Description:
Chemical mapping of a 177-nucleotide RNA with 2A3 and DMS. For 2A3 the reverse transcriptase was SuperScript II with manganese. Reactivities are rounded to 0.1 and cut off at 0 and 3. The RNA was probed in 150 mM KOAc, 10 mM MgCl2 and 150 mM bicine (pH 8.5) at 24 C.
RNA sequence: GGGAACGACUCGAGUAGAGUCGAAAAGGGCCGGCUACUCUUCUUUCCCUUCUCUCGUCUUCCUCGGUCAACCUCUUAAGUUCCUCUUCUUCUUCCUUGCUGAGGUUCUUCCCUCCCCCGGCUAGCUCCUAAUUAUUACGUUCGCGUAAUAAUUAGGAAAAGAAACAACAACAACAAC
Reactivity to 2A3 in 0.01 (KOAc 150mM, MgCl2 10mM, bicine 150mM(pH8.5), 24C), signal-to-noise 2, nucleotides 027 to 126: g000g000g020c010c000g070g010c040u070a050c010u030c010u130u030c010u070u070u030c010c010c050u050u010c040u000c010u020c010g050u030c040u060u020c020c020u020c030g020g050u040c040a060a050c020c000u050c040u070u090a070a030g020u050u030c000c010u030c000u040u010c000u070u020c000u050u040c020c010u040u040g020c010u030g030a050g030g000u030u030c000u010u030c000c010c000u010c010c000c000c000c010g000g030c020u020a010g000c010u000
Reactivity to DMS in 0.01 (KOAc 150mM, MgCl2 10mM, bicine 150mM(pH8.5), 24C), signal-to-noise 2, nucleotides 027 to 126: g010g020g020c060c050g030g020c060u000a070c050u000c020u000u010c050u020u000u000c030c010c020u000u000c060u010c040u010c060g010u000c040u000u000c060c020u010c090g030g010u000c060a050a160c070c020u000c100u010u000a050a150g020u000u000c010c010u000c050u000u000c030u000u000c050u000u000c050c020u000u000g020c030u020g010a080g020g000u000u000c050u000u000c020c000c000u000c000c000c000c010c030g040g020c090u010a100g000c100u010